[RMDB]
RNA sequence: GGGAACGACUCGAGUAGAGUCGAAAAUUUCUGUAGUGGCUAAAUACUUCAUAAUAGGGGCUCUUAAAUUCGUAUGUAUGAGAAAGAUUAGAAUCCACAUUUAUUAAUAUUAGAUGACCCUGGAGAGACUGUUAUUUAGUUUCGACUAAAUAACAGUAAAAGAAACAACAACAACAAC
Reactivity to 2A3 in 0.01 (KOAc 150mM, MgCl2 10mM, bicine 150mM(pH8.5), 24C), signal-to-noise 2, nucleotides 027 to 126: u000u060u010c030u050g100u090a050g020u050g050g020c070u120a080a050a030u150a120c020u040u100c000a040u050a250a030u010a100g000g020g040g000c010u040c010u120u190a070a130a050u040u060c010g010u060a040u100g140u040a060u070g060a100g060a090a030a010g080a030u000u130a020g080a090a040u000c000c000a010c000a040u060u050u120a030u030u080a080a060u070a030u120u050a030g010a080u090g060a180c010c020c020u010g000g000a050g000a000g020
Reactivity to DMS in 0.01 (KOAc 150mM, MgCl2 10mM, bicine 150mM(pH8.5), 24C), signal-to-noise 2, nucleotides 027 to 126: u010u000u000c020u030g000u040a070g040u000g010g010c000u000a080a060a050u030a030c010u010u010c010a070u010a030a060u020a120g000g010g010g020c020u010c100u000u040a030a050a110u010u000c030g010u000a030u020g000u000a020u010g000a110g000a080a100a040g000a130u030u020a070g000a090a180u010c000c000a010c000a070u000u030u040a060u030u020a060a090u010a160u010u000a060g010a040u000g000a070c040c020c010u020g010g010a110g010a100g000